An RNA of 207 nucleotides, treated with 2A3 and read out base by base. The reactions ran in a buffer of 150 mM KOAc, 10 mM MgCl2 and 150 mM bicine (pH 8.5), at 24 C. The 2A3 profile rests on 667 reads.

RNA sequence: GGGAACGACUCGAGUAGAGUCGAAAAACGCGGAGUAGGCUCCGCGACAACACUUCUUUCGACCCGCUAACCGAGACCUAUGGGUCGUUAAAUUACGUCUCUAUCUUACUCACAUAACAUCGCACAAAAAACGUGGUUCGGUUCGCCGAACCACGAACCCAACGAGUAUGUUCGCAUACUCGUUGGGAAAAGAAACAACAACAACAAC
Reactivity to 2A3 in 0.01 (KOAc 150mM, MgCl2 10mM, bicine 150mM(pH8.5), 24C), signal-to-noise 2, nucleotides 027 to 156: a010c010g000c000g000g000a010g000u180a060g190g130c020u000c000c010g010c010g040a020c020a010a000c020a020c020u150u150c030u100u300u170c000g000a000c020c000c010g020c180u200a010a040c010c050g020a010g000a010c010c000u060a100u250g000g000g020u000c000g040u020u030a000a010a010u120u030a020c010g000u000c010u000c010u010a090u040c030u090u120a140c070u040c120a060c010a150u170a110a030c010a090u160c080g000c210a080c130a100a080a000a000a010a000c060g000u000g000g020u000u000c000g000g030u020u050c170g000c100c000g000a000a000c010c010a000c000g000a000a000